[RMDB]
RNA sequence: GGGAACGACUCGAGUAGAGUCGAAAAUGGGAGUUCGCUCCCAGAAUUGUCCUAAGUCUUCCGUGACUGCACUAUAUACUUGUCAGUCGGAAACGACUUGGAUUUAGUAUACGAAUGCAGUCGGAAGAUAUGGAGUUUGUGCGGCUUCGGCCGCAAAGCUAGACAGAUAGUUCGCUAUCUGUCUAGCAAAAGAAACAACAACAACAAC
Reactivity to DMS in 0.01 (KOAc 150mM, MgCl2 10mM, bicine 150mM(pH8.5), 24C), signal-to-noise 1, nucleotides 027 to 156: u000g050g000g000a030g020u000u000c300g030c000u020c000c020c000a000g000a060a070u000u000g000u000c020c020u010a110a290g010u000c020u000u000c010c010g040u030g020a070c010u000g000c000a020c040u000a130u000a030u010a010c030u000u000g030u000c010a050g040u010c000g020g030a180a140a270c050g030a030c010u010u000g030g010a030u000u010u010a040g020u000a050u000a030c070g050a070a020u000g000c010a010g010u010c000g000g000a030a010g010a030u000a040u000g020g000a110g010u000u000u000g040u000g000c000g050g000c020u000u020c240g020g030c010c010g080c010a000a010a270
Reactivity to 2A3 in 0.01 (KOAc 150mM, MgCl2 10mM, bicine 150mM(pH8.5), 24C), signal-to-noise 2, nucleotides 027 to 156: u020g000g030g010a000g020u130u110c170g070c170u010c010c000c000a000g040a000a160u190u190g070u060c000c000u020a110a080g020u000c000u010u020c030c020g140u160g230a060c010u000g030c000a010c030u010a040u010a000u020a140c010u010u020g010u030c000a000g000u000c000g000g060a100a110a050c000g000a000c010u020u110g110g000a010u170u200u030a000g000u000a010u010a010c160g070a220a130u000g000c010a020g000u020c000g000g000a010a000g010a000u040a040u020g010g000a060g060u080u140u170g120u070g020c040g000g010c000u000u100c190g130g000c000c000g000c000a000a000a000

Chemical mapping of a 207-nucleotide RNA with DMS and 2A3. High DMS reactivity at an A or C suggests that its Watson-Crick edge is free. For 2A3 the reverse transcriptase was SuperScript II with manganese. The RNA was probed in 150 mM KOAc, 10 mM MgCl2 and 150 mM bicine (pH 8.5) at 24 C. The DMS profile rests on 2,857 reads. The 2A3 profile rests on 1,148 reads.